[RMDB]
RNA sequence: GGGAACGACUCGAGUAGAGUCGAAAAGGUGAGCGAUGAUUACGUUCGCGACAAUACUGUCUUGCAUGCCCUACAGAGUGAAUUUGUUAAUAUGGCUAGCUUCGUUGAGUAUGAACUUGCUAAGAAGUACUCAGGACGUGUUCGCACGUCCUGAGUAAAAAGAAACAACAACAACAAC
Reactivity to 2A3 in 0.01 (KOAc 150mM, MgCl2 10mM, bicine 150mM(pH8.5), 24C), signal-to-noise 1, nucleotides 027 to 126: g180g000u030g030a030g010c010g030a080u170g040a040u160u180a140c040g010u010u000c010g000c000g010a010c040a000a040u100a100c030u040g040u120c030u040u080g020c010a060u110g010c000c000c000u020a010c060a000g010a060g040u110g080a160a130u160u030u030g080u080u090a150a080u130a090u150g040g000c000u000a030g010c000u020u010c010g080u020u050g100a040g000u090a030u050g040a040a040c030u000u060g000c030u060a020a010g030a060a040g110
Reactivity to DMS in 0.01 (KOAc 150mM, MgCl2 10mM, bicine 150mM(pH8.5), 24C), signal-to-noise 2, nucleotides 027 to 126: g020g030u010g020a030g000c040g030a100u000g020a190u030u000a110c050g020u000u010c020g040c050g010a070c090a080a080u010a070c070u010g000u010c060u010u000g010c070a050u010g010c030c030c020u000a080c060a080g000a000g020u010g000a060a120u010u000u000g030u000u010a050a120u020a070u010g000g000c040u010a130g010c110u000u000c030g010u020u010g000a070g020u010a060u010g010a050a060c050u000u000g000c060u010a050a060g010a080a150g010